The record gives the reactivity of an RNA of 170 nucleotides to 2A3 and DMS. For DMS, 12,161 sequencing reads were counted.

[RMDB]
RNA sequence: GGGAACGACUCGAGUAGAGUCGAAAACCUGUGGUUGAUUGGCAUUAUUUUGAUGCACAGCCCUUGACCAGGAAGGUACAACAGCUUUUCUAUACAGAGGACAUGGCCUCAAGAUUUGCUGAUGGGCGAAUGGAAUCCUUCGGGAUUCCAAAAAGAAACAACAACAACAAC
Reactivity to 2A3 in 0.01 (KOAc 150mM, MgCl2 10mM, bicine 150mM(pH8.5), 24C), signal-to-noise 2, nucleotides 027 to 129: c010c010u030g090u100g000g000u020u120g020a300u060u020g040g010c000a060u020u180a130u100u120u070u300g040a060u000g040c000a000c000a090g000c000c000c020u040u120g000a000c000c000a060g060g080a020a020g050g020u160a020c040a030a040c070a050g000c000u050u020u020u000c010u070a180u030a100c030a000g050a020g030g000a020c100a190u110g110g000c000c010u020c000a000a000g000a000u020u000u020g000c000u000g000a040u040g000g000g000c030g040a060a120
Reactivity to DMS in 0.01 (KOAc 150mM, MgCl2 10mM, bicine 150mM(pH8.5), 24C), signal-to-noise 1, nucleotides 027 to 129: c010c020u000g090u030g000g000u010u000g000a070u020u050g000g040c000a000u040u000a000u030u020u020u030g060a000u000g000c050a170c080a090g020c000c040c010u000u000g020a050c050c020a040g000g000a000a010g010g020u060a070c090a100a100c040a070g000c000u000u000u000u000c020u030a130u060a170c260a080g050a040g010g000a150c010a120u000g050g030c020c010u000c050a110a030g020a040u010u000u000g000c040u020g010a070u020g040g010g030c060g010a050a070

For DMS the reverse transcriptase was MarathonRT.
The reactions ran in a buffer of 150 mM KOAc, 10 mM MgCl2 and 150 mM bicine (pH 8.5), at 24 C.